Source: RMDB library M2PK50, as collected in RNAgym. Structure probing data (DMS and 2A3) for a 177-nucleotide construct. Conditions: 150 mM KOAc, 10 mM MgCl2 and 150 mM bicine (pH 8.5), 24 C.
RNA sequence: GGGAACGACUCGAGUAGAGUCGAAAAGCGCCCCUUUUCGAAGGGGCGCACUGGAAAUAAAGCCGAAAGGCAAGGCAUUCCUUAUUUGGCGAAAGCCUGCCACUAUUGAGAUCUUCGGAUCUCAAAAGACUUAUCGUUGAUUCGUCAACGAUAAGUCAAAAGAAACAACAACAACAAC
Reactivity to DMS in 0.01 (KOAc 150mM, MgCl2 10mM, bicine 150mM(pH8.5), 24C), signal-to-noise 2, nucleotides 027 to 126: g000c000g020c010c000c000c000u000u010u010u020c170g030a010a010g020g010g000g020c010g000c000a010c050u000g010g000a060a080a050u000a070a160a100g010c000c000g010a080a100a160g010g020c010a060a040g000g000c040a090u000u000c000c010u000u000a120u010u010u010g010g000c050g010a050a060a150g010c010c000u000g020c040c000a130c300u010a150u000u000g000a010g000a000u000c000u000u020c170g030g000a000u000c000u000c000a010a010a090a080
Reactivity to 2A3 in 0.01 (KOAc 150mM, MgCl2 10mM, bicine 150mM(pH8.5), 24C), signal-to-noise 4, nucleotides 027 to 126: g000c000g000c000c000c000c000u010u030u030u050c160g110a010a010g000g000g010g000c000g020c000a000c010u010g030g080a030a090a100u130a080a130a030g020c020c020g070a090a040a030g010g000c030a040a050g020g020c010a030u030u060c010c000u080u140a280u160u160u150g060g020c050g000a060a010a000g030c000c010u000g000c020c010a060c040u110a180u080u100g000a010g000a010u000c010u000u100c280g100g000a000u000c000u000c010a000a010a010a010